[RMDB]
RNA sequence: GGGAACGACUCGAGUAGAGUCGAAAAAGAAAAGAGGAUUAGCGAUGGGGGUCGCGUCUUCGCCGGACUUAGCCAAUCUCUACGGCUGGCAUUUCGAGCGCGCAAGUGGAAUUAUGAAUCACCCGUCACAUUGUGGACGGUUCGCCGUCCACAAUGUAAAAGAAACAACAACAACAAC
Reactivity to 2A3 in 0.01 (KOAc 150mM, MgCl2 10mM, bicine 150mM(pH8.5), 24C), signal-to-noise 1, nucleotides 027 to 126: a000g160a000a060a000a030g050a010g070g000a060u080u110a030g030c010g000a010u040g050g000g030g050g040u000c030g000c000g060u040c000u060u060c010g000c000c000g030g000a030c030u060u110a030g010c000c010a010a050u010c030u010c020u160a050c050g050g000c040u000g000g000c000a020u080u130u080c110g020a140g010c030g000c020g010c050a060a000g030u050g060g140a110a180u110u110a120u290g060a060a010u050c050a120c060c020c000g060u040c020
Reactivity to DMS in 0.01 (KOAc 150mM, MgCl2 10mM, bicine 150mM(pH8.5), 24C), signal-to-noise 3, nucleotides 027 to 126: a060g000a030a060a060a110g000a100g020g020a040u020u010a160g000c020g010a090u010g000g010g000g020g030u010c050g030c090g010u000c040u000u020c050g000c020c030g010g000a070c140u030u020a130g000c010c000a030a120u020c040u020c190u010a090c130g000g000c070u000g000g030c000a040u000u020u010c090g010a160g030c090g010c150g010c160a100a090g070u010g000g010a030a100u010u050a100u000g000a160a080u040c040a110c020c000c010g000u030c100